Description
Structure probing data (DMS and 2A3) for a 207-nucleotide construct. It was measured as part of the RMDB library M2RFPK. Conditions: 150 mM KOAc, 10 mM MgCl2 and 150 mM bicine (pH 8.5), 24 C.

[RMDB]
RNA sequence: GGGAACGACUCGAGUAGAGUCGAAAAUUGCGCCUCCGAUUCGCCGUCGGCCUUUCCCCAGCAGCCAUGACCUACCAGGCUGCGGUGCGGCUCGCCGCACAGGUCAUCCCUCAUCGGGCGCGUCCUGGAUAGGGCUAUACUUUCGAGUAUAGCCCAAGACUCAUACAUAGUUCGCUAUGUAUGAGUCAAAAGAAACAACAACAACAAC
Reactivity to DMS in 0.01 (KOAc 150mM, MgCl2 10mM, bicine 150mM(pH8.5), 24C), signal-to-noise 1, nucleotides 027 to 156: u000u010g080c000g080c000c020u000c020c040g030a130u000u000c040g020c010c010g030u020c030g030g000c040c040u000u000u000c030c010c010c060a120g010c050a020g030c010c010a180u010g020a090c090c090u010a120c120c090a120g020g000c010u000g000c020g010g060u000g040c020g000g080c080u010c130g020c020c000g000c040a070c030a020g000g000u000c050a190u010c030c000c000u000c090a070u000c040g000g040g020c000g020c010g010u000c020c000u040g000g000a210u010a130g010g060g000c000u000a030u000a000c000u010u000u040c200g000a000g040u000a010u000a010g020c010c000c020a000a030
Reactivity to 2A3 in 0.01 (KOAc 150mM, MgCl2 10mM, bicine 150mM(pH8.5), 24C), signal-to-noise 2, nucleotides 027 to 156: u080u060g020c030g000c000c030u070c050c000g050a030u110u020c050g050c080c050g050u080c030g020g040c000c010u030u070u060c010c010c000c010a020g000c000a010g000c000c010a130u090g040a090c030c000u100a130c100c060a020g010g030c010u000g000c000g000g010u000g000c010g000g000c040u060c130g100c020c010g000c000a010c000a000g020g020u020c010a090u080c070c010c020u130c030a090u080c040g010g010g000c010g010c020g020u060c010c030u050g090g000a130u100a180g030g000g000c000u000a000u000a000c000u060u080u180c190g050a000g000u000a000u000a000g000c020c000c000a000a000